[RMDB]
RNA sequence: GGGAACGACUCGAGUAGAGUCGAAAAAUCAAGCAUGCGACAGAUAUUACUUUGUUGCAGUCUGAAGUAGAGCAUUUAAAAAUUGUUACACGCCAAAAUGCUCGGCGUCUUGAGGAGCAUGAUGAGCUCCAGAGUAAACGUUCGCGUUUACUCUGGAAAAAGAAACAACAACAACAAC
Reactivity to 2A3 in 0.01 (KOAc 150mM, MgCl2 10mM, bicine 150mM(pH8.5), 24C), signal-to-noise 2, nucleotides 027 to 126: a000u030c050a020a020g030c010a000u030g020c000g020a020c000a010g130a030u080a110u220u240a190c150u120u000u070g000u000u030g000c010a010g110u000c040u060g050a030a000g000u040a010g030a000g000c020a020u040u160u300a140a110a040a090a110u130u070g030u080u170a040c060a000c090g000c020c000a020a300a020a000u020g020c000u000c000g010g000c020g010u070c030u050u030g080a060g010g020a030g030c010a000u140g000a120u110g020a110g020c020
Reactivity to DMS in 0.01 (KOAc 150mM, MgCl2 10mM, bicine 150mM(pH8.5), 24C), signal-to-noise 3, nucleotides 027 to 126: a070u000c030a040a030g020c060a090u010g010c000g010a010c010a020g010a020u010a170u010u000a110c200u000u000u010g020u000u000g000c010a040g010u000c040u000g000a070a060g020u000a040g000a000g000c000a020u000u000u000a040a040a000a060a100u000u000g010u000u010a140c150a050c040g000c010c010a060a050a060a030u000g000c000u010c010g000g010c010g000u000c070u000u000g010a060g010g000a030g020c010a060u010g010a170u010g020a150g010c040